[RMDB]
RNA sequence: GGGAACGACUCGAGUAGAGUCGAAAACAAGGACGUUUCGACGUCCUUGAUAGGACCGCCCUUUUGGGCUAAGGCCAUACGGACAGCCGGGACCACUGCCGAACGCAAACCCCUUCGGGGGUUUGAAGGUAGAUAAACGAUUCGUCGUUUAUCUACCAAAAGAAACAACAACAACAAC
Reactivity to 2A3 in 0.01 (KOAc 150mM, MgCl2 10mM, bicine 150mM(pH8.5), 24C), signal-to-noise 7, nucleotides 027 to 126: c010a000a010g000g000a000c000g000u020u060u180c240g090a010c000g000u010c000c000u000u010g000a000u020a010g030g010a050c010c010g040c010c000c010u190u150u160u290g030g000g000c070u080a110a070g030g000c010c000a040u050a060c030g020g030a030c010a020g020c010c000g020g010g020a040c010c010a020c020u030g010c010c020g050a050a010c060g000c040a010a000a010c000c010c010c020u030u080c180g070g000g000g000g000u000u000u000g000a010a000
Reactivity to DMS in 0.01 (KOAc 150mM, MgCl2 10mM, bicine 150mM(pH8.5), 24C), signal-to-noise 6, nucleotides 027 to 126: c010a010a000g000g010a010c010g020u000u000u010c170g030a030c000g010u000c000c000u000u010g010a060u010a090g010g010a110c040c040g010c010c010c010u000u000u000u010g010g010g010c020u010a040a060g000g010c020c020a080u010a080c060g000g000a050c070a080g000c030c010g000g010g000a080c020c020a120c140u000g000c020c020g010a230a090c210g000c000a010a010a010c000c000c000c000u000u010c190g030g010g000g010g010u000u000u000g000a050a090